RNA sequence: GGGAACGACUCGAGUAGAGUCGAAAAAGUCUUUAUAUAGAUGUCUCUAAGUAAGGUAUCGGUCGAGAACUCAUUGAAACCUGAGAAGUUUGUCAAAAUCUCUUGGGUCGAUAAGUUGCUCCCUAACGGCUACAUAUGUUUUCGAACAUAUGUAGCCAAAAGAAACAACAACAACAAC
Reactivity to DMS in 0.01 (KOAc 150mM, MgCl2 10mM, bicine 150mM(pH8.5), 24C), signal-to-noise 2, nucleotides 027 to 126: a170g010u000c020u000u020u020a100u000a130u010a020g010a060u020g020u060c070u000c020u000a080a300g000u030a040a060g020g020u000a060u000c010g010g030u000c070g010a090g020a090a060c010u000c030a090u030u000g020a120a120a000c000c000u000g010a020g010a040a000g050u000u000u000g020u050c300a050a000a010a020u000c010u000c000u000u000g020g010g000u010c030g020a090u000a030a040g000u010u000g000c140u000c000c010c020u050a150a090c180
Reactivity to 2A3 in 0.01 (KOAc 150mM, MgCl2 10mM, bicine 150mM(pH8.5), 24C), signal-to-noise 3, nucleotides 027 to 126: a000g070u070c080u120u150u060a300u060a120u110a150g010a020u000g060u010c000u010c030u040a190a240g140u050a120a030g100g120u090a080u110c120g000g020u060c040g010a000g000a020a010c010u010c020a040u010u030g060a140a030a060c000c020u020g000a000g000a090a090g030u020u130u130g290u160c090a100a060a020a070u020c010u000c000u010u000g020g000g000u010c000g020a010u010a020a000g010u000u020g120c000u010c000c000c000u000a140a000c160

This 177-nucleotide RNA was probed chemically with DMS and 2A3. Conditions: 150 mM KOAc, 10 mM MgCl2 and 150 mM bicine (pH 8.5), 24 C. For 2A3, 1,300 sequencing reads were counted. Values cover nucleotides 27 to 126. For DMS, 2,804 sequencing reads were counted. For 2A3 the reverse transcriptase was SuperScript II with manganese. The data come from the RNA Mapping Database (RMDB), library OK1LIB.